[RMDB]
RNA sequence: GGGAACGACUCGAGUAGAGUCGAAAACUGUAAUUCGAGAAGACAUGGAAGAUUGGUAGUUAUGAGUUCAAAAUAUAAAUAGCUUAGCAACAUUGUGUAGACACUUUUUAAAAAAGGUUUUCUAUAUACUGUCCUUUCUACUUUGUAGCUCAAAUACAGCAGUAAUCAUCUUCGGAUGAUUACUGCUAAAAGAAACAACAACAACAAC
Reactivity to 2A3 in 0.01 (KOAc 150mM, MgCl2 10mM, bicine 150mM(pH8.5), 24C), signal-to-noise 2, nucleotides 027 to 156: c010u010g040u050a090a100u060u090c090g000a000g010a110a000g010a020c020a020u100g070g020a020a030g020a050u090u130g030g020u020a080g020u030u090a050u100g060a010g040u060u070c020a000a030a140a000u200a060u090a010a110a040u060a050g000c000u090u120a010g030c020a010a060c020a070u080u000g010u010g020u050a000g040a000c010a050c060u030u110u060u150u240a020a160a050a040a010a030g020g000u080u070u040u030c000u000a040u010a020u000a040c030u030g010u040c000c000u010u030u020c000u030a120c020u000u040u060g030u070a050g030c010u050c030a030a030a150u300a060c050
Chemical mapping of a 207-nucleotide RNA with 2A3.
The reactions ran in a buffer of 150 mM KOAc, 10 mM MgCl2 and 150 mM bicine (pH 8.5), at 24 C.
Source: RMDB library OK3TST, as collected in RNAgym.